[RMDB]
RNA sequence: GGGAACGACUCGAGUAGAGUCGAAAAGAGAAAGUGACGAUACUUUACGGAACGUGCGGACAGUGCAACUGCCAUCUUAAAGAGGAAGAAUAGAAAAAAGCAUGCGGCCAUUUACAGUGCCGCAUGCCAAAGUGAAAUCGUUCGCGAUUUCACUUUGAAAAGAAACAACAACAACAAC
Reactivity to DMS in 0.01 (KOAc 150mM, MgCl2 10mM, bicine 150mM(pH8.5), 24C), signal-to-noise 9, nucleotides 027 to 126: g010a100g010a050a040a050g010u010g000a090c100g010a120u010a050c040u000u010u010a090c090g000g000a070a060c090g010u020g010c050g000g000a100c080a060g020u010g000c080a070a080c060u010g000c020c030a070u010c050u010u010a040a090a090g000a070g000g020a070a050g000a070a060u030a080g000a010a050a050a070a090a100g010c000a010u000g000c000g000g000c010c030a110u020u020u050a090c270a110g000u020g020c000c000g000c000a000u000g010c000
Reactivity to 2A3 in 0.01 (KOAc 150mM, MgCl2 10mM, bicine 150mM(pH8.5), 24C), signal-to-noise 9, nucleotides 027 to 126: g090a000g030a020a070a010g060u070g050a050c060g020a030u060a150c050u050u080u080a040c040g050g020a110a030c030g030u090g020c030g020g040a050c030a050g040u050g080c030a070a020c020u030g010c020c010a070u040c050u090u180a130a120a020g080a020g070g030a050a030g030a070a060u190a110g180a050a080a010a020a010a010g000c000a000u000g000c000g010g000c010c010a050u120u160u130a130c080a030g040u080g130c000c000g000c000a000u000g000c000

The record gives the reactivity of an RNA of 177 nucleotides to DMS and 2A3.
The RNA was probed in 150 mM KOAc, 10 mM MgCl2 and 150 mM bicine (pH 8.5) at 24 C.
For DMS the reverse transcriptase was MarathonRT.
The data come from the RNA Mapping Database (RMDB), libraries RFM100 and RFMREP.